[RMDB]
RNA sequence: GGGAACGACUCGAGUAGAGUCGAAAAAGCCACCGCUACGGCGGUGCCAAGUAGAAAAGUUGGUGCUUAGACCACGCCCUCUACCGUAAUAAUAGAUAAAUAGGCGAGUAUCAGUACGCUGAUACAAAAAACACUCACACGUUCGCGUGUGAGUGAAGUUAGACGAAUGCUUCGGCAUUCGUCUAACAAAAGAAACAACAACAACAAC
Reactivity to 2A3 in 0.01 (KOAc 150mM, MgCl2 10mM, bicine 150mM(pH8.5), 24C), signal-to-noise 1, nucleotides 027 to 156: a000g040c010c020a010c000c010g000c000u020a020c170g130g000c000g010g000u000g010c010c000a170a050g070u060a030g040a000a010a000a000g000u040u050g000g020u110g080c250u240u160a060g050a060c010c000a000c020g030c000c000c000u000c000u010a010c020c020g040u030a020a030u030a050a050u030a070g240a050u090a100a160a080u070a090g020g020c050g060a010g000u010a000u000c000a000g000u050a020c300g000c150u000g010a010u000a000c000a000a300a000a000a000a000c000a000c000u020c000a000c000a000c000g020u070u040c100g070c010g080u000g010u000g030a000g000u000g000a020a000

Conditions: 150 mM KOAc, 10 mM MgCl2 and 150 mM bicine (pH 8.5), 24 C. An RNA of 207 nucleotides, treated with 2A3 and read out base by base. The 2A3 profile rests on 585 reads. Reactivities are given for positions 27 through 156.